[RMDB]
The record gives the reactivity of an RNA of 177 nucleotides to 2A3 and DMS. For DMS the reverse transcriptase was MarathonRT. The reactions ran in a buffer of 150 mM KOAc, 10 mM MgCl2 and 150 mM bicine (pH 8.5), at 24 C. The 2A3 profile rests on 2,500 reads.
RNA sequence: GGGAACGACUCGAGUAGAGUCGAAAAUUUCCCAGGCCUGCUGCUUGGUGCCGGUCUGGGGACAGACAGUGCUAUACUAGAGCAGAGGAAAUCCAGACAGGUCGUUUCCAUCUGCCUGGGGCCUGUCGCAUUAGGGGAGGUUCGCCUCCCCUAAUGCAAAAGAAACAACAACAACAAC
Reactivity to 2A3 in 0.01 (KOAc 150mM, MgCl2 10mM, bicine 150mM(pH8.5), 24C), signal-to-noise 4, nucleotides 027 to 126: u020u030u010c000c000c000a000g000g010c000c000u020g010c010u060g040c050u150u230g230g000u110g020c000c000g020g000u000c000u000g000g000g000g000a010c020a010g000a000c000a010g030u080g280c010u070a080u080a300c000u010a000g010a040g060c000a000g000a020g020g020a010a030a000u060c050c010a030g130a300c070a080g150g020u100c090g030u050u000u000c010c040a300u000c010u020g000c000c000u000g000g000g000g000c000c000u000g000u020c020
Reactivity to DMS in 0.01 (KOAc 150mM, MgCl2 10mM, bicine 150mM(pH8.5), 24C), signal-to-noise 2, nucleotides 027 to 126: u000u010u010c010c010c000a030g020g010c000c010u010g010c010u030g030c110u020u000g010g000u050g000c000c140g010g010u000c000u000g010g010g020g010a020c300a070g000a060c020a010g010u080g000c020u000a110u070a300c010u010a010g010a110g020c020a010g000a050g010g000a040a040a020u060c020c010a160g020a080c240a100g020g010u030c100g000u010u010u000c040c010a110u000c000u000g020c000c010u020g000g020g010g010c000c010u000g000u000c010